[RMDB]
The record gives the reactivity of an RNA of 177 nucleotides to 2A3 and DMS. High DMS reactivity at an A or C suggests that its Watson-Crick edge is free.
RNA sequence: GGGAACGACUCGAGUAGAGUCGAAAACAUUGAAAGUCGACGCCUCGGAGCAGCUUGAGCCGGGCAUUCGCCCGGUCGAACCGUCGAAGUUCGUGGAAGCCGUAAUGGCAGGAAGCGAACGAACGUCGGUAGGAUUCAUUUUCGAAUGAAUCCUACCAAAAGAAACAACAACAACAAC
Reactivity to 2A3 in 0.01 (KOAc 150mM, MgCl2 10mM, bicine 150mM(pH8.5), 24C), signal-to-noise 8, nucleotides 027 to 126: c060a090u130u270g100a090a030a020g060u050c010g000a020c030g040c010c020u060c060g050g010a060g020c060a010g010c040u080u090g020a010g020c020c000g000g000g020c040a040u200u190c120g000c000c000c000g010g000u010c010g000a010a020c020c010g020u030c000g040a070a030g000u000u000c000g000u010g020g010a050a030g000c000c010g050u280a160a170u260g000g000c020a030g110g100a010a000g010c000g000a010a010c000g010a100a030c030g060u090c060
Reactivity to DMS in 0.01 (KOAc 150mM, MgCl2 10mM, bicine 150mM(pH8.5), 24C), signal-to-noise 5, nucleotides 027 to 126: c090a080u030u020g010a130a090a090g010u000c020g000a080c030g000c110c010u000c060g000g000a100g010c110a090g000c090u010u010g020a180g000c010c000g010g020g000c050a160u020u010c270g010c000c010c000g020g000u000c040g000a050a110c070c020g000u000c040g010a100a200g000u010u000c000g010u000g010g010a270a090g000c000c000g000u020a110a060u090g000g010c010a050g020g020a300a180g000c000g010a010a010c000g000a060a060c100g000u020c040